[RMDB]
RNA sequence: GGGAACGACUCGAGUAGAGUCGAAAAGCUGUGGGCAUACCAUCACAGUGUCUGACUUCAUGGAGUAUGUCAAGAAGGCAAACAAGACCAAGGCGCGGCUGGACAGCUGGGGAGAGUUCCACUGCCCCUCUAUGAUCAGGUUCGCCUGAUCAUAGAGAAAAGAAACAACAACAACAAC
Reactivity to DMS in 0.01 (KOAc 150mM, MgCl2 10mM, bicine 150mM(pH8.5), 24C), signal-to-noise 3, nucleotides 027 to 126: g000c030u010g010u000g010g020g010c080a090u010a090c110c040a100u000c050a070c080a060g000u000g000u000c040u000g000a070c040u010u010c060a090u010g010g000a090g030u020a080u000g020u000c060a080a100g020a070a060g010g000c060a050a070a070c140a060a040g010a090c050c060a050a090g020g010c100g000c090g000g020c050u000g000g000a060c070a070g030c050u000g000g000g000g000a070g000a230g000u000u000c040c030a070c070u000g000c010c030c010
Reactivity to 2A3 in 0.01 (KOAc 150mM, MgCl2 10mM, bicine 150mM(pH8.5), 24C), signal-to-noise 3, nucleotides 027 to 126: g010c030u010g000u070g030g010g040c060a080u070a120c030c000a070u060c030a030c010a060g050u030g050u080c070u080g080a100c010u050u050c080a080u150g060g000a070g070u150a080u170g080u050c010a000a060g130a050a090g140g000c060a070a060a030c030a020a120g040a050c020c030a030a050g040g000c040g020c020g070g000c040u020g020g050a020c010a020g010c050u040g010g000g010g000a070g000a000g040u060u030c020c020a040c030u040g040c000c000c010